An RNA of 177 nucleotides, treated with DMS and read out base by base. It was measured as part of the RMDB library OK2TRN. DMS adducts were read by reverse transcription with MarathonRT. For DMS, 1,179 sequencing reads were counted. DMS (dimethyl sulfate) methylates the pairing face of unpaired adenines and cytosines.
RNA sequence: GGGAACGACUCGAGUAGAGUCGAAAAAACGGCGACCCUCUCACGGCGGCCUCCGCCCCCGGGCAUGACCGACACACAUUGUCAAACGGUGUCAAUGGCGCAGCAGCCUCUUCUGAGGAUGAGAUCCCCGAGCCUAAUUAUUCGUAAUUAGGCUCGGAAAAGAAACAACAACAACAAC
Reactivity to DMS in 0.01 (KOAc 150mM, MgCl2 10mM, bicine 150mM(pH8.5), 24C), signal-to-noise 2, nucleotides 027 to 126: a070a090c020g030g020c060g000a100c050c030c010u000c050u020c070a090c130g000g000c140g010g000c050c020u000c080c040g010c030c000c040c020c030g020g010g010c070a040u000g000a130c080c010g020a110c070a050c100a090c080a070u000u010g000u010c160a060a060a110c180g000g000u000g000u000c030a090a050u020g010g030c040g020c100a090g000c020a100g000c040c010u000c050u010u000c160u010g020a060g010g010a080u000g000a100g000a260u000c020c010